About this RNA: Chemical mapping of a 177-nucleotide RNA with DMS and 2A3. The reactions ran in a buffer of 150 mM KOAc, 10 mM MgCl2 and 150 mM bicine (pH 8.5), at 24 C. The 2A3 profile rests on 13,383 reads. The data come from the RNA Mapping Database (RMDB), library TTRDEL.

RNA sequence: GGGAACGACUCGAGUAGAGUCGAAAAGAUAUGGAAAGAGAAUAGCGCUUCCCUGGGUCGGAAACGACCCAGAACAGAACUACGCUAUCUCUUUCCUAAGUCAAACUCUGAUGUUCGCAUCAGAGAAGAACAGUGUAUAGUUCGCUAUACACUGUUCAAAAGAAACAACAACAACAAC
Reactivity to DMS in 0.01 (KOAc 150mM, MgCl2 10mM, bicine 150mM(pH8.5), 24C), signal-to-noise 4, nucleotides 027 to 126: g010a040u010a300u010g000g010a020a000a000g000a020g000a060a040u000a010g000c000g010c200u000u000c050c130c000u000g010g020g010u010c000g010g000a090a090a180c000g000a010c000c000c000a010g000a030a080c300a120g000a020a040c130u010a070c020g000c000u000a000u000c000u000c000u000u000u000c000c000u000a010a060g000u000c010a130a110a180c010u000c000u000g000a020u000g000u000u010c210g010c000a010u000c000a000g010a010g000a070a070
Reactivity to 2A3 in 0.01 (KOAc 150mM, MgCl2 10mM, bicine 150mM(pH8.5), 24C), signal-to-noise 5, nucleotides 027 to 126: g010a010u020a020u090g000g000a010a000a010g020a010g050a200a110u010a010g010c070g050c230u060u020c030c000c000u010g020g000g000u000c010g010g020a060a040a040c010g000a010c030c030c000a000g000a010a000c020a030g040a040a020c080u300a070c130g000c010u000a000u000c000u000c000u000u010u000c000c000u000a010a000g010u000c010a010a030a140c010u020c000u010g010a000u000g050u090u120c300g000c110a000u000c000a000g010a010g010a030a040